[RMDB]
RNA sequence: GGGAACGACUCGAGUAGAGUCGAAAAAGGCGAAACAGGAGUAAUCCCGUGUAGAAACAGGGUUUUCACCCUUCCUUUCUUCUGCGGUUUCCUUCCUUUGCGCGCCACUCGACCCCUCGCCCCCUUGGCUUUAUGUUUAGUUCGCUAAACAUAAAGCAAAAGAAACAACAACAACAAC
Reactivity to 2A3 in 0.01 (KOAc 150mM, MgCl2 10mM, bicine 150mM(pH8.5), 24C), signal-to-noise 3, nucleotides 027 to 126: a000g010g000c000g040a030a040a030c040a100g000g010a000g030u030a020a020u040c020c020c000g000u030g000u000a020g010a090a150a240c300a160g040g020g010u080u060u220u250c140a060c000c000c000u020u000c000c000u030u010u000c000u030u000c040u090g020c000g040g020u000u030u020c020c000u060u180c010c010u050u080u140g070c110g000c000g030c020c000a030c040u030c030g090a110c010c020c020c020u020c030g110c000c010c000c000c050u020u030g060
Reactivity to DMS in 0.01 (KOAc 150mM, MgCl2 10mM, bicine 150mM(pH8.5), 24C), signal-to-noise 4, nucleotides 027 to 126: a060g010g010c170g020a080a080a080c220a030g000g020a040g010u000a030a050u010c180c000c010g030u000g000u000a010g000a010a020a020c190a020g010g000g010u000u010u020u000c260a090c010c000c000u000u000c060c030u000u000u000c000u000u000c030u020g030c000g000g010u000u010u010c060c020u000u000c020c020u000u000u010g020c200g020c010g010c010c000a080c060u000c040g010a160c030c010c020c030u000c060g010c020c000c000c010c030u010u010g020

This 177-nucleotide RNA was probed chemically with 2A3 and DMS.
For 2A3 the reverse transcriptase was SuperScript II with manganese.